[RMDB]
RNA sequence: GGGAACGACUCGAGUAGAGUCGAAAACAGUCCAAUGCUUCACUGAGCCAUUUUACCUCACCCCCACUGCUGUUCGCCGACCGUUGACUAUUCUCUACAAACCACAAAGACAUUCGAACACUAUACCAGUAAUGCAGCUGUUCGCAGCUGCAUUACUAAAAGAAACAACAACAACAAC
Reactivity to DMS in 0.01 (KOAc 150mM, MgCl2 10mM, bicine 150mM(pH8.5), 24C), signal-to-noise 1, nucleotides 027 to 126: c260a030g000u080c000c020a090a080u000g000c000u050u000c140a030c080u150g000a080g000c040c060a220u080u080u000u000a090c040c050u050c070a150c010c070c000c020c000a030c010u000g000c000u000g020u060u000c010g000c040c000g050a050c100c070g000u070u060g000a100c030u000a020u000u030c140u030c000u000a000c030a030a110a010c130c030a160c100a050a130a160g000a090c000a080u000u040c050g020a060a050c090a000c060u000a000u000a010c100c060
Reactivity to 2A3 in 0.01 (KOAc 150mM, MgCl2 10mM, bicine 150mM(pH8.5), 24C), signal-to-noise 3, nucleotides 027 to 126: c040a010g010u000c030c000a040a080u160g010c010u030u100c030a040c110u080g050a010g010c010c010a100u040u070u090u230a050c010c000u010c020a020c000c010c000c000c000a020c010u030g000c030u020g000u080u070c020g000c000c000g000a020c000c000g000u010u020g000a000c020u010a080u130u010c050u000c000u020a020c030a110a090a030c000c020a070c050a090a090a000g110a010c020a020u090u040c050g000a040a030c040a010c030u060a050u090a180c020c030